This 177-nucleotide RNA was probed chemically with DMS and 2A3. The RNA was probed in 150 mM KOAc, 10 mM MgCl2 and 150 mM bicine (pH 8.5) at 24 C. It was measured as part of the RMDB library OK1LIB. The DMS profile rests on 6,909 reads.
[RMDB]
RNA sequence: GGGAACGACUCGAGUAGAGUCGAAAAGCAGUUCCGAAGGGGUCACUGCGAACACGUGACUACCGGUCGGGCCAGUCUUGUGGAUUGGACGGACUACCUCCGGUCGGGCCGGUAGGACGUCCGAAAAGGCAAGGAGCUGGUUCGCCAGUUCCUUGCCAAAAGAAACAACAACAACAAC
Reactivity to DMS in 0.01 (KOAc 150mM, MgCl2 10mM, bicine 150mM(pH8.5), 24C), signal-to-noise 3, nucleotides 027 to 126: g000c020a030g020u000u040c000c010g000a150a090g010g000g010g000u000c140a000c000u010g010c060g000a090a080c160a050c060g000u000g030a070c000u000a050c000c010g000g000u000c010g010g020g000c000c010a100g010u020c050u000u000g010u010g010g010a120u020u020g000g000a040c020g010g000a040c020u000a070c070c020u010c130c060g010g030u010c090g020g000g000c050c060g000g010u000a010g000g000a010c000g020u000c010c030g000a030a040a080a110
Reactivity to 2A3 in 0.01 (KOAc 150mM, MgCl2 10mM, bicine 150mM(pH8.5), 24C), signal-to-noise 2, nucleotides 027 to 126: g000c010a010g000u000u050c000c010g010a120a030g010g020g020g000u090c030a000c000u010g000c000g020a020a010c100a010c010g010u020g080a060c000u040a110c000c000g000g000u000c010g030g000g000c010c000a010g020u040c030u110u120g050u040g050g040a080u060u100g040g020a000c010g000g000a000c010u050a070c010c020u030c020c000g050g030u030c040g030g000g000c030c010g000g000u000a000g000g000a000c010g000u000c030c000g020a010a010a000a050